[RMDB]
Notes
Conditions: 150 mM KOAc, 10 mM MgCl2 and 150 mM bicine (pH 8.5), 24 C. An RNA of 207 nucleotides, treated with 2A3 and DMS and read out base by base. For DMS, 2,522 sequencing reads were counted.
RNA sequence: GGGAACGACUCGAGUAGAGUCGAAAAGGGGACGCAAAGGUUUCGACGGGGUUGUGAGGUUAUAGGUAGCAAGUCAGGUUUGUCGCUGUGAAAGACUAAACACAUCGUUUAGAUGGAAACAAAGAAUACGCUUUAGCUGCUUAGUUCAGCUACACCUUACCCUUGAAUAGUUCGCUAUUCAAGGGUAAAAAGAAACAACAACAACAAC
Reactivity to 2A3 in 0.01 (KOAc 150mM, MgCl2 10mM, bicine 150mM(pH8.5), 24C), signal-to-noise 2, nucleotides 027 to 156: g020g000g020g000a010c030g010c070a000a040a110g100g010u070u050u080c050g040a060c060g000g000g000g040u050u030g060u070g010a000g020g030u110u060a050u050a070g040g080u030a020g020c040a020a050g140u070c020a010g010g090u050u030u040g070u020c020g000c040u010g000u030g100a110a040a040g020a010c020u000a010a060a010c050a000c010a060u050c050g050u090u090u130a060g000a010u040g000g100a060a090a000c060a030a150a010g080a050a050u060a060c050g020c050u030u070u040a010g010c020u100g020c020u220u160a000g030u060u110c000a000g000c000u000a040c020a080c020c010u020
Reactivity to DMS in 0.01 (KOAc 150mM, MgCl2 10mM, bicine 150mM(pH8.5), 24C), signal-to-noise 1, nucleotides 027 to 156: g000g010g020g000a050c060g000c070a070a180a140g000g030u000u000u010c050g000a120c080g020g000g000g000u000u000g000u010g000a170g000g000u000u000a100u000a020g010g000u000a100g030c000a020a080g010u000c030a160g050g000u020u000u010g050u000c040g040c010u000g000u010g020a150a070a100g000a100c060u000a010a030a020c060a110c090a030u000c070g000u000u000u000a060g030a140u000g010g010a160a080a090c070a050a010a130g030a040a080u000a120c120g000c050u010u010u000a080g020c010u000g020c070u000u000a050g010u000u000c090a030g040c000u000a090c080a000c070c040u000